The record gives the reactivity of an RNA of 177 nucleotides to DMS and 2A3.
The RNA was probed in 150 mM KOAc, 10 mM MgCl2 and 150 mM bicine (pH 8.5) at 24 C.
It was measured as part of the RMDB library OK2TST.
For 2A3, 11,555 sequencing reads were counted.
RNA sequence: GGGAACGACUCGAGUAGAGUCGAAAAAGGUGAUGGAGUACCGAUCAACACUUCACUUGAUCACAAGGCAGCACAUGGCUAUUGGCUUAGAUUCAAUCGUCAAAAGCCUGGUGGAGCUCAACUACCACUAAAUCAUAAAAUUCGUUUUAUGAUUUAGAAAAGAAACAACAACAACAAC
Reactivity to DMS in 0.01 (KOAc 150mM, MgCl2 10mM, bicine 150mM(pH8.5), 24C), signal-to-noise 9, nucleotides 027 to 126: a080g010g020u010g010a060u010g010g020a090g020u000a080c100c050g000a080u010c090a060a050c120a070c090u000u010c090a060c090u000u000g010a080u010c080a100c130a090a060g010g010c040a070g020c090a070c130a100u000g000g010c010u000a080u000u000g010g010c020u000u010a120g020a120u000u000c110a070a080u010c130g000u000c020a030a070a140a090g000c010c010u000g010g030u010g010g010a170g010c020u000c080a040a080c090u000a090c040c030a200
Reactivity to 2A3 in 0.01 (KOAc 150mM, MgCl2 10mM, bicine 150mM(pH8.5), 24C), signal-to-noise 6, nucleotides 027 to 126: a000g060g010u040g010a090u080g020g030a050g020u040a050c020c050g020a040u060c020a010a060c040a020c100u130u100c030a040c060u040u070g030a030u080c010a020c030a160a030g040g010c010a010g060c030a060c020a140u070g010g000c010u020a020u010u030g010g000c030u120u150a050g010a080u190u060c040a020a050u040c020g010u000c000a080a100a110a000g000c000c000u030g040g020u040g020g040a030g000c010u000c020a020a040c020u060a070c010c010a020